Notes: Structure probing data (2A3) for a 207-nucleotide construct. Values cover nucleotides 27 to 156. The 2A3 profile rests on 579 reads. The data come from the RNA Mapping Database (RMDB), library M2RFPK.

RNA sequence: GGGAACGACUCGAGUAGAGUCGAAAAGAUUCCUCGUUGUUGAGCGAGGUUUAAACAAAUCGACCACACAAACGUAGAGCCGAUUACGGAUUUAUAAAUUAAGGCAUUAAGUGUGAUAAGGAGACAAAAAACGAUGUUGUGUUCGCACAACAUCGAAGUGAUAGGCUCUGUUCGCAGAGCCUAUCACAAAAGAAACAACAACAACAAC
Reactivity to 2A3 in 0.01 (KOAc 150mM, MgCl2 10mM, bicine 150mM(pH8.5), 24C), signal-to-noise 1, nucleotides 027 to 156: g120a090u190u090c020c000u000c000g000u000u030g010u020u000g000a000g020c010g010a010g060g060u020u210u020a010a020a010c090a000a010a030u000c010g000a020c000c000a020c000a000c000a040a270a030c040g050u050a010g020a020g170c000c000g010a020u060u180a020c020g030g000a000u000u300u000a170u150a050a100a050u070u130a000a000g000g010c010a020u090u090a140a040g050u000g000u000g000a000u000a020a050g090g010a070g020a010c030a080a010a030a000a060a000c000g020a030u000g000u000u000g000u000g000u110u020c070g050c080a000c000a000a000c000a000u000c000g010a000a020